Background:
Conditions: 150 mM KOAc, 10 mM MgCl2 and 150 mM bicine (pH 8.5), 24 C. The record gives the reactivity of an RNA of 177 nucleotides to DMS and 2A3. For DMS the reverse transcriptase was MarathonRT. High DMS reactivity at an A or C suggests that its Watson-Crick edge is free.
RNA sequence: GGGAACGACUCGAGUAGAGUCGAAAAGGGUGAUCGUUCGCGAUCACCCAAAGAAGCACGAAACGCCAACAAAUCCCGGAACAUUGGUAUGGAAGCCUGAGAAAACUGACAAGUUCGCUUGUCAGAAGUUGUCAUAGUACUUCGGUACUAUGACAACAAAAGAAACAACAACAACAAC
Reactivity to DMS in 0.01 (KOAc 150mM, MgCl2 10mM, bicine 150mM(pH8.5), 24C), signal-to-noise 3, nucleotides 027 to 126: g000g010g020u010g010a020u010c000g050u010u010c170g000c020g040a010u000c000a000c010c010c010a000a040a100g000a160a110g000c030a030c030g010a110a120a120c050g000c030c020a040a050c080a080a120a100u000c010c000c020g000g010a070a100c060a120u000u000g010g000u010a110u010g000g000a110a060g010c070c030u010g000a120g000a070a080a090a120c000u000g000a000c000a020a020g000u000u030c250g020c010u000u000g000u000c020a000g020a030a020
Reactivity to 2A3 in 0.01 (KOAc 150mM, MgCl2 10mM, bicine 150mM(pH8.5), 24C), signal-to-noise 2, nucleotides 027 to 126: g000g000g020u010g010a020u010c000g020u090u030c120g000c010g100a000u000c000a000c000c000c000a000a000a000g000a000a000g030c030a010c020g030a110a180a000c050g010c010c010a030a000c010a050a180a060u040c020c010c000g040g030a060a040c040a050u070u110g020g020u080a050u110g020g030a080a050g020c040c030u100g000a050g090a060a090a040a080c000u000g010a000c000a000a000g000u030u110c200g000c100u000u000g010u020c000a000g000a010a000
The 2A3 profile rests on 1,919 reads.